The record gives the reactivity of an RNA of 177 nucleotides to DMS and 2A3. As a SHAPE reagent, 2A3 marks flexible, mostly unpaired nucleotides at the ribose 2'-OH. Reactivities are rounded to 0.1 and cut off at 0 and 3. The data come from the RNA Mapping Database (RMDB), library OK2TST. Conditions: 150 mM KOAc, 10 mM MgCl2 and 150 mM bicine (pH 8.5), 24 C. For DMS the reverse transcriptase was MarathonRT. For DMS, 3,532 sequencing reads were counted.
[RMDB]
RNA sequence: GGGAACGACUCGAGUAGAGUCGAAAAGAGCGAAGUCUACGGGAGAGCCAGGCCACUUGCUUUUACUGCGGCUGGUACGUCUGCGGUAUCGCCGCCGUCCCGAACCAGUAGGCCGUGAGGCGCUCGAUGACUGAUUACCUUUCGAGGUAAUCAGUCAAAAAGAAACAACAACAACAAC
Reactivity to DMS in 0.01 (KOAc 150mM, MgCl2 10mM, bicine 150mM(pH8.5), 24C), signal-to-noise 3, nucleotides 027 to 126: g010a040g020c020g030a080a070g010u010c080u010a110c100g010g000g010a050g010a140g010c020c020a150g000g010c020c020a080c060u000u000g020c030u000u000u000u010a070c060u000g000c010g000g000c010u030g070g020u000a010c030g010u000c160u010g010c180g040g010u000a020u000c060g020c010c020g020c020c060g010u000c030c020c000g010a090a100c140c130a020g010u010a070g020g010c000c040g000u000g010a120g010g020c030g000c020u000c040g000a260
Reactivity to 2A3 in 0.01 (KOAc 150mM, MgCl2 10mM, bicine 150mM(pH8.5), 24C), signal-to-noise 1, nucleotides 027 to 126: g060a010g000c050g080a110a020g090u070c030u090a060c020g000g000g050a080g000a010g050c010c000a010g000g030c040c010a020c010u040u080g040c010u000u000u020u090a000c000u040g010c000g010g040c020u130g000g000u050a040c050g110u070c110u230g260c040g100g000u050a050u080c000g020c000c000g000c000c010g020u000c020c030c000g040a020a050c010c000a010g030u120a160g040g020c000c000g030u100g080a100g020g040c060g000c050u020c030g040a060